[RMDB]
RNA sequence: GGGAACGACUCGAGUAGAGUCGAAAAUAACGUGCUGCCUCCAGCUUUGUUCCUUUGGCUUAGGAUUAUCUUGGCAAUGUGGGCUCUUUUUUGUCACCAUAUGAACUUUAAUGUAGUUUUUUCCAAUUCUGUGAAGAAAGUCAAUGGAAGCUUGAUAGACUCAUAAUAGGUUCGCCUAUUAUGAGUCAAAAGAAACAACAACAACAAC
Reactivity to 2A3 in 0.01 (KOAc 150mM, MgCl2 10mM, bicine 150mM(pH8.5), 24C), signal-to-noise 2, nucleotides 027 to 156: u070a010a030c020g040u040g010c030u040g020c000c000u020c060c020a030g000c000u100u080u150g070u060u120c010c000u040u030u010g030g010c030u030u030a030g030g030a100u080u060a060u140c020u060u080g020g010c010a030a100u100g000u070g020g020g000c030u020c030u150u070u120u060u110u130g110u110c030a030c100c010a020u040a090u120g020a080a080c000u040u100u140a140a090u200g020u080a050g020u000u000u000u030u110u010c030c010a020a030u100u090c080u060g040u050g080a010a080g060a060a070a000g030u030c000a010a010u040g030g010a030a000g020c020u010u010g010a010u020a180
Reactivity to DMS in 0.01 (KOAc 150mM, MgCl2 10mM, bicine 150mM(pH8.5), 24C), signal-to-noise 2, nucleotides 027 to 156: u000a070a110c050g000u000g030c020u000g020c010c010u000c030c040a130g020c080u000u010u030g020u000u000c000c030u000u000u000g020g000c030u010u010a100g010g010a140u000u000a030u010c070u020u000g010g000c020a060a060u000g020u010g010g010g000c030u000c020u020u000u000u000u010u020g030u000c040a090c070c030a070u010a080u010g000a060a050c010u010u000u000a070a120u010g000u000a040g010u000u000u000u000u000u000c030c030a050a110u000u000c090u020g010u020g010a080a070g020a060a020a060g020u010c030a040a100u000g010g010a120a080g010c030u000u010g000a130u000a190
An RNA of 207 nucleotides, treated with 2A3 and DMS and read out base by base.
Reactivities are rounded to 0.1 and cut off at 0 and 3.